RNA sequence: GGGAACGACUCGAGUAGAGUCGAAAAAUCUGGGUUCGCUUUAACCGUGAUUAUCAACUCAAUGGUCAAUCAAUUCUAUCUGAUGUGGGCUUGGAGGAAAAUCAUGAGCAGGAUAAGCCCAAGCAUGAAUCCGUUAUAGAUUCGUCUAUAACGGAUUAAAAGAAACAACAACAACAAC
Reactivity to 2A3 in 0.01 (KOAc 150mM, MgCl2 10mM, bicine 150mM(pH8.5), 24C), signal-to-noise 7, nucleotides 027 to 126: a000u030c050u050g050g010g010u040u070c050g020c070u090u070u110a060a030c030c000g010u010g000a020u040u060a050u160c030a030a110c020u000c050a030a120u100g080g040u080c020a020a020u030c000a030a050u270u040c050u160a250u070c080u080g070a060u080g140u120g300g010g010c020u020u050g070g000a020g010g020a030a130a030a010u010c010a030u030g050a020g060c060a030g030g050a040u030a120a010g000c010c000c000a010a010g060c030a090u080g040
Reactivity to DMS in 0.01 (KOAc 150mM, MgCl2 10mM, bicine 150mM(pH8.5), 24C), signal-to-noise 9, nucleotides 027 to 126: a070u010c080u010g010g010g020u000u000c140g010c050u010u000u010a090a110c090c030g010u000g000a040u000u000a090u010c090a080a170c060u010c060a060a060u010g000g010u000c040a070a060u000c030a030a080u010u010c170u010a080u010c170u010g010a040u000g020u010g010g010g000c030u000u000g010g010a060g000g000a070a070a050a040u000c030a040u000g010a100g020c100a090g010g000a080u000a060a090g000c030c010c010a050a070g010c150a080u010g010
Chemical mapping of a 177-nucleotide RNA with 2A3 and DMS. The DMS profile rests on 21,989 reads. It was measured as part of the RMDB library OK2TRN. DMS adducts were read by reverse transcription with MarathonRT. The 2A3 profile rests on 8,584 reads. The RNA was probed in 150 mM KOAc, 10 mM MgCl2 and 150 mM bicine (pH 8.5) at 24 C.